[RMDB]
RNA sequence: GGGAACGACUCGAGUAGAGUCGAAAAGCGCGGGCCGGCUGGGCCACUCCUCGACCGCCGUCCCCACCCCUCUGGUUGGGGCCGCGCCGGCGCGGACUCCUGCGGUCCGGGGCGGCGGGGCUACGCAAAAUAAUAGCAGUUUCGACUGCUAUUAUUUAAAAGAAACAACAACAACAAC
Reactivity to DMS in 0.01 (KOAc 150mM, MgCl2 10mM, bicine 150mM(pH8.5), 24C), signal-to-noise 4, nucleotides 027 to 126: g010c110g030c110g030g010g010c060c020g010g010c030u010g040g020g020c050c050a060c100u000c070c060u000c060g010a080c020c020g020c010c000g000u000c010c000c000c030a190c030c010c020c110u010c120u000g010g010u000u000g010g000g000g010c020c010g000c020g000c030c010g010g000c010g010c010g000g000a020c010u000c050c130u010g010c100g010g010u000c020c010g010g000g010g010c010g000g010c000g010g000g000g000c020u000a050c080g020c110a090
Reactivity to 2A3 in 0.01 (KOAc 150mM, MgCl2 10mM, bicine 150mM(pH8.5), 24C), signal-to-noise 2, nucleotides 027 to 126: g060c050g010c090g020g000g000c050c020g060g000c060u160g040g030g010c060c030a080c070u080c030c010u040c030g040a070c010c020g010c000c000g020u030c010c000c000c000a070c000c030c010c010u080c090u200g230g030u110u110g060g010g000g060c000c000g040c020g010c030c000g070g060c150g000c040g050g030a000c010u040c050c090u250g050c120g020g010u020c030c020g010g000g000g060c020g010g000c010g010g020g000g000c020u060a010c040g030c030a030
Structure probing data (DMS and 2A3) for a 177-nucleotide construct. For DMS, 10,470 sequencing reads were counted. 2A3 adducts were read by reverse transcription with SuperScript II with manganese. Values cover nucleotides 27 to 126.